[RMDB]
RNA sequence: GGGAACGACUCGAGUAGAGUCGAAAAUAAGUUCCUCUUCCUCCUCCUUGCUGAGUGUCUUGCCUCCUGCGCUCAGCUGCUUCUUCUUGUUCUCGAGGGCCUUCCUUCGUCGGUGAUCCCGCCUCUCCUCUUCGGAGAACCCUCCUCUGAGAGGCCUCAUAAUGAGGAUGUUCGCAUCCUCAUUAUGAAAAGAAACAACAACAACAAC
Reactivity to 2A3 in 0.01 (KOAc 150mM, MgCl2 10mM, bicine 150mM(pH8.5), 24C), signal-to-noise 4, nucleotides 027 to 156: u250a060a050g020u030u010c000c000u050c010u060u050c010c020u020c010c000u030c000c010u010u050g000c010u010g020a020g000u040g010u050c050u060u130g090c010c030u030c010c000u030g010c000g010c010u030c020a020g010c020u010g020c020u030u070c010u070u020c010u080u160g060u130u080c050u030c040g040a050g020g040g030c010c000u070u090c020c000u060u080c020g060u030c060g010g040u040g040a070u040c010c010c020g030c020c020u040c010u040c030c000u060c040u160u160c050g010g000a010g010a020a030c010c010c000u010c010c010u040c010u010g040a070g000a000g010g020c000c000u020
Reactivity to DMS in 0.01 (KOAc 150mM, MgCl2 10mM, bicine 150mM(pH8.5), 24C), signal-to-noise 1, nucleotides 027 to 156: u020a060a250g000u010u000c020c010u000c050u010u000c030c000u000c030c030u010c050c050u010u000g000c000u030g000a060g010u000g010u000c020u000u000g020c040c030u000c060c040u000g000c110g000c040u010c040a130g010c050u010g040c050u040u000c050u010u000c060u010u010g040u000u000c050u010c040g020a080g030g050g030c030c000u000u000c030c020u000u000c050g030u000c060g030g060u000g000a170u000c030c010c040g020c050c010u000c010u000c010c020u000c040u000u000c110g050g000a060g040a070a120c050c030c010u000c020c010u010c070u010g010a100g020a050g000g000c060c140u020

Chemical mapping of a 207-nucleotide RNA with 2A3 and DMS. For 2A3 the reverse transcriptase was SuperScript II with manganese. The 2A3 profile rests on 3,948 reads. The RNA was probed in 150 mM KOAc, 10 mM MgCl2 and 150 mM bicine (pH 8.5) at 24 C. Source: RMDB library VIROID, as collected in RNAgym. Values are in units of 0.01, from 0 to 300, in steps of 10. For DMS, 4,451 sequencing reads were counted.